[RMDB]
The data come from the RNA Mapping Database (RMDB), library M2RFPK. An RNA of 207 nucleotides, treated with 2A3 and read out base by base. The RNA was probed in 150 mM KOAc, 10 mM MgCl2 and 150 mM bicine (pH 8.5) at 24 C. For 2A3, 576 sequencing reads were counted.
RNA sequence: GGGAACGACUCGAGUAGAGUCGAAAAUACCGUCUUCUCCCCGACGGUUACAAUCCAUAGCUUCACGUUGUGUAGCGUAGGUGGAAGGUAUCGUGUGGUGUAUAAACACCACAUAGUCUCUUAGGGGUCAAGCUGAUAAACUUCGGUUUAUCAGCAAUGCUCUUUACACCUUCGGGUGUAAAGAGCAAAAAGAAACAACAACAACAAC
Reactivity to 2A3 in 0.01 (KOAc 150mM, MgCl2 10mM, bicine 150mM(pH8.5), 24C), signal-to-noise 1, nucleotides 027 to 156: u060a000c000c000g000u010c010u220u010c010u040c010c000c000c020g000a010c000g000g010u020u030a000c030a020a050u030c000c010a030u040a080g010c000u060u060c000a000c080g300u300u300g000u100g000u010a020g000c030g110u150a080g020g130u030g020g030a000a000g140g010u090a070u140c060g020u000g000u000g000g000u000g030u020a070u100a300a170a030c000a010c000c000a000c000a000u010a010g000u000c000u000c000u030u190a080g000g000g000g000u010c110a090a010g000c000u000g000a000u000a000a000a000c000u030u000c080g070g000u000u000u000a000u000c000a020g030c000a000a010